[RMDB]
RNA sequence: GGGAACGACUCGAGUAGAGUCGAAAACGCUUAUCGGGAGACGUGCUCUCGCCGUGGGACAGCAGCUUACCCUCUGCUCGGUGCUGGUAUAUACAGGGUCCCUGUCGGGCUGAGCUUUGAUGCCUGGACGAUGGAGCACGUUCGCGUGCUCCAUCGUAAAAGAAACAACAACAACAAC
Reactivity to DMS in 0.01 (KOAc 150mM, MgCl2 10mM, bicine 150mM(pH8.5), 24C), signal-to-noise 1, nucleotides 027 to 126: c050g000c110u000u000a100u010c020g030g040g000a080g000a060c070g030u010g000c070u000c000u000c060g060c050c060g030u010g010g000g010a110c070a010g020c020a050g000c120u000u020a150c100c030c050u010c020u000g010c050u000c100g030g030u000g010c000u000g000g000u000a080u020a150u010a110c090a000g000g000g000u000c020c000c010u010g000u020c040g010g010g080c090u020g010a120g000c120u000u000u020g000a090u040g000c030c020u010g020g020